[RMDB]
RNA sequence: GGGAACGACUCGAGUAGAGUCGAAAAGAGGAAUCUGAGGCCCAGAGAAGAAGGGAAUUAGGAGCAGAGGUAGGAGGAAGACAGAGCUAGGAAGAAGUCUCUAGGUCUCCUGCUGCUGAUGAUUCUGUGUUAAGCCUGUUUUCACUGCCUUGAAUGAAUGCCAUUUAUUAUUCGUAAUAAAUGGCAUAAAAGAAACAACAACAACAAC
Reactivity to 2A3 in 0.01 (KOAc 150mM, MgCl2 10mM, bicine 150mM(pH8.5), 24C), signal-to-noise 6, nucleotides 027 to 156: g060a010g030g060a030a060u050c060u110g010a030g010g030c030c060c070a020g020a000g010a060a010g020a020a030g030g000g020a040a070u100u050a110g040g010a030g040c010a000g020a010g030g000u030a020g010g090a020g010g020a090a040g000a020c030a010g020a000g020c020u060a040g090g070a070a040g040a050a010g100u050c010u000c010u070a060g080g070u020c000u020c010c010u030g030c010u010g000c010u020g010a040u050g030a040u110u010c020u050g060u010g030u080u060a040a030g030c000c010u020g040u020u040u030u040c030a020c020u030g020c010c030u120u080g070a080a050u210g080a050
Reactivity to DMS in 0.01 (KOAc 150mM, MgCl2 10mM, bicine 150mM(pH8.5), 24C), signal-to-noise 4, nucleotides 027 to 156: g000a090g020g010a080a040u010c040u010g000a080g060g020c030c030c030a150g020a150g020a070a080g000a060a070g010g020g010a080a090u000u010a080g010g020a040g000c010a080g000a280g030g010u000a030g010g010a070g010g010a060a070g010a070c050a090g010a060g020c040u000a120g020g010a110a130g000a100a100g010u000c020u000c030u000a090g020g010u000c010u000c030c020u000g010c020u000g020c000u000g040a160u000g010a080u010u000c020u000g020u010g010u000u000a060a140g000c030c020u040g010u000u010u010u000c040a050c040u000g020c030c020u000u000g010a100a100u010g000a090